RNA sequence: GGGAACGACUCGAGUAGAGUCGAAAAACGCUCCUUACGAGGAGCGAAGACAGUCAGUAGUUGGUCUGGUGUGAGCAGGAAUUCUCAGAUCACCUCUUGGCUGUGAGAGCCGACGUACGCGUCGGCAGCCCUUAGGCCGCUUCGGCGGCCUAAGGGCAAAAGAAACAACAACAACAAC
Reactivity to 2A3 in 0.01 (KOAc 150mM, MgCl2 10mM, bicine 150mM(pH8.5), 24C), signal-to-noise 1, nucleotides 027 to 126: a000c020g030c000u020c020c020u070u080a110c300g130a040g000g000a000g000c000g000a000a010g080a000c000a000g000u010c000a010g000u020a010g000u080u000g020g020u000c040u020g140g000u200g000u080g020a030g070c100a110g040g300a070a170u150u070c070u000c000a020g000a030u000c000a000c000c000u000c070u080u020g000g010c010u000g000u000g010a110g010a000g000c010c000g000a000c000g020u000a000c230g010c030g080u000c000g000g000c010a000